[RMDB]
RNA sequence: GGGAACGACUCGAGUAGAGUCGAAAAUCAGCAAGCAAUGCUCCAUAGGCCAAAUCCGGCCCACUACCUAUUUUUAUUUUAUUUUUGAGACAGAGUUUCACUCUUGUUGCCCAGGCUGGAGUGCAAUGGUGUGAUCUCGGCUCACCACAACCUCCGAAUGGUAAUCGGAUUUCGAUCCGAUUACCAUAAAAGAAACAACAACAACAAC
Reactivity to 2A3 in 0.01 (KOAc 150mM, MgCl2 10mM, bicine 150mM(pH8.5), 24C), signal-to-noise 1, nucleotides 027 to 156: u120c020a000g010c020a100a000g020c030a040a170u050g030c020u070c050c010a170u110a090g050g000c030c030a000a080a110u080c090c030g060g010c040c000c030a020c010u130a040c000c020u030a130u000u250u020u120u060a110u090u200u100u060a120u130u130u000u130u160g020a010g060a030c060a010g030a010g050u000u000u150c020a030c050u000c040u070u030g030u040u090g000c020c010c000a030g130g010c080u150g070g000a030g020u090g030c020a050a040u040g020g000u040g020u010g050a040u000c050u000c030g000g000c010u010c000a050c030c030a100c000a030a120c020c040u050c000c050g050a100

This 207-nucleotide RNA was probed chemically with 2A3.
Reactivities are given for positions 27 through 156.
The RNA was probed in 150 mM KOAc, 10 mM MgCl2 and 150 mM bicine (pH 8.5) at 24 C.
2A3 adducts were read by reverse transcription with SuperScript II with manganese.
For 2A3, 403 sequencing reads were counted.
Source: RMDB library OK3TST, as collected in RNAgym.